[RMDB]
RNA sequence: GGGAACGACUCGAGUAGAGUCGAAAAGGCUUUGGAGUCUAAGGAAAUUAGGUCGGAUACAUACGAAUUAGUGUGUUUGCGACGCUGUCUUCGUGAUCAAGCCUAAAGUCCUCGCUUCGGCGAGGACGUUAGCAGUUCUCUUCGGAGAACUGCUAACAAAAGAAACAACAACAACAAC
Reactivity to 2A3 in 0.01 (KOAc 150mM, MgCl2 10mM, bicine 150mM(pH8.5), 24C), signal-to-noise 3, nucleotides 027 to 126: g010g000c050u160u140u200g080g000a140g040u020c010u060a040a050g080g020a080a090a090u230u190a230g000g000u020c010g000g060a020u020a030c000a000u010a000c010g060a240a280u140u070a210g000u010g010u010g040u020u020u030g150c010g000a010c020g000c050u000g010u000c000u020u040c040g050u040g000a040u060c010a010a010g000c000c000u030a120a070a000g000u000c000c000u000c000g000c000u050u060c230g080g000c000g000a000g000g000a010c000
Reactivity to DMS in 0.01 (KOAc 150mM, MgCl2 10mM, bicine 150mM(pH8.5), 24C), signal-to-noise 3, nucleotides 027 to 126: g020g010c000u000u000u010g020g010a110g010u010c020u010a110a080g010g010a020a040a080u010u020a010g000g000u000c010g010g000a020u020a010c020a000u000a020c000g000a120a170u010u020a100g010u000g020u000g010u000u000u000g000c000g000a010c000g000c020u000g000u000c010u000u000c080g000u000g010a150u000c040a020a020g000c000c010u000a060a100a170g010u000c000c010u000c010g010c000u000u010c170g010g020c000g000a010g010g000a000c010